[RMDB]
RNA sequence: GGGAACGACUCGAGUAGAGUCGAAAAGGUACUGCGAUAUUUCAAGGUAUGGCAGCAGUAUUUAUUGCUCAGGCCUAUAACUGUCCAUUACCUUUCAGUAGUUUGUUAUUAAUCGUUAUCGCAGCGAUAUACCUAAGGCAUUCGUGCCUUAGGUAUAAAAAGAAACAACAACAACAAC
Reactivity to 2A3 in 0.01 (KOAc 150mM, MgCl2 10mM, bicine 150mM(pH8.5), 24C), signal-to-noise 2, nucleotides 027 to 126: g110g040u130a040c020u010g000c010g020a010u000a050u100u210u140c050a010a010g000g010u020a020u050g080g000c030a010g000c010a000g000u000a190u030u180u030a060u080u100g000c000u030c150a090g250g000c020c000u080a060u020a180a000c000u000g060u140c010c000a030u050u110a040c000c000u040u020u080c050a040g010u050a030g020u160u120u170g140u140u050a100u070u130a130a010u010c040g050u020u050a030u030c010g000c030a000g000c000g000a000
Reactivity to DMS in 0.01 (KOAc 150mM, MgCl2 10mM, bicine 150mM(pH8.5), 24C), signal-to-noise 7, nucleotides 027 to 126: g020g010u010a070c080u000g000c040g000a020u000a040u000u000u010c170a080a030g010g010u000a020u000g010g020c160a070g000c060a050g010u000a090u010u010u000a060u020u000g010c010u000c160a160g010g010c030c150u000a060u000a060a060c030u000g010u010c010c010a030u010u000a010c000c000u000u000u010c130a100g010u000a090g010u000u000u000g010u010u010a080u010u000a060a070u000c070g010u000u000a040u000c050g000c050a040g010c090g010a080